An RNA of 170 nucleotides, treated with DMS and 2A3 and read out base by base. For DMS the reverse transcriptase was MarathonRT. The 2A3 profile rests on 54,470 reads. For 2A3 the reverse transcriptase was SuperScript II with manganese. The DMS profile rests on 72,061 reads. The RNA was probed in 150 mM KOAc, 10 mM MgCl2 and 150 mM bicine (pH 8.5) at 24 C.
[RMDB]
RNA sequence: GGGAACGACUCGAGUAGAGUCGAAAAUUGAAGGUAAAACAGCCUGUGGGUGAAACACACCCACAGGGCCCAUUGGGCGCUAGCACUCUGCUAUCACGGUACCUUUGUGCGCCUGUUUUACCGAAGGGGCCUCUCUACUUCGGUAGAGAGAAAAGAAACAACAACAACAAC
Reactivity to DMS in 0.01 (KOAc 150mM, MgCl2 10mM, bicine 150mM(pH8.5), 24C), signal-to-noise 8, nucleotides 027 to 129: u050u050g000a190a090g000g000u000a000a000a000a010c000a000g020c000c000u040g020u020g020g020g000u020g000a110a150a100c270a220c010a000c030c000c010a020c000a000g030g020g030c020c000c020a000u050u100g000g000g020c000g000c000u070a100g040c020a000c000u020c020u000g020c230u000a000u000c070a070c220g040g020u040a010c180c010u000u000u010g000u000g010c010g000c010c000u020g000u000u020u010u010a000c000c010g010a050a030g010g000g000g000c290
Reactivity to 2A3 in 0.01 (KOAc 150mM, MgCl2 10mM, bicine 150mM(pH8.5), 24C), signal-to-noise 9, nucleotides 027 to 129: u100u110g060a080a030g000g000u010a000a000a000a010c000a000g000c000c000u000g000u000g010g000g010u010g030a030a080a010c130a000c000a000c050c000c000a000c000a000g000g000g000c010c000c000a020u240u300g000g000g000c010g010c060u100a060g000c010a000c010u000c010u010g050c060u060a020u130c040a050c230g130g010u080a030c020c000u000u000u020g010u010g000c000g010c000c000u000g000u000u010u000u000a000c000c000g000a010a000g010g000g030g010c000